This 177-nucleotide RNA was probed chemically with DMS and 2A3. High 2A3 reactivity points to a flexible backbone, as in loops and unpaired stretches. Source: RMDB library OK2TST, as collected in RNAgym. DMS adducts were read by reverse transcription with MarathonRT.

RNA sequence: GGGAACGACUCGAGUAGAGUCGAAAAGUGGACACAGCCGUUUUCAUGGAGUGUGAAGCCCAAGAACUAACCGGUGACGAUAAGCUGACCUUAGCCAGGCUCAAUGAAUGCAAAUCUUGUAUUAAAGACCUGAUCUGACAUUCGUGUCAGAUCAGGUAAAAGAAACAACAACAACAAC
Reactivity to DMS in 0.01 (KOAc 150mM, MgCl2 10mM, bicine 150mM(pH8.5), 24C), signal-to-noise 2, nucleotides 027 to 126: g020u010g010g000a210c090a060c050a100g030c060c050g010u000u000u010u000c100a100u010g010g000a100g000u000g000u000g020a110a130g050c060c050c040a100a070g000a130a150c200u000a080a030c050c070g000g030u000g000a090c030g020a100u010a020a070g000c000u000g000a070c050c090u000u010a080g000c000c110a060g000g000c070u010c050a060a050u000g020a040a130u000g000c090a050a010a050u000c080u000u000g020u000a030u020u000a060a180a130g020
Reactivity to 2A3 in 0.01 (KOAc 150mM, MgCl2 10mM, bicine 150mM(pH8.5), 24C), signal-to-noise 1, nucleotides 027 to 126: g000u000g120g020a000c010a000c010a150g030c000c030g040u120u090u000u000c110a120u110g000g020a090g100u010g000u020g100a110a010g000c000c000c000a020a020g050a020a050c050u080a040a000c030c020g000g050u000g040a010c040g050a030u040a190a040g070c030u040g100a140c000c000u000u110a020g000c080c070a000g050g020c040u070c030a090a150u110g120a060a020u090g040c000a050a040a090u030c050u060u100g060u060a110u000u090a140a000a000g000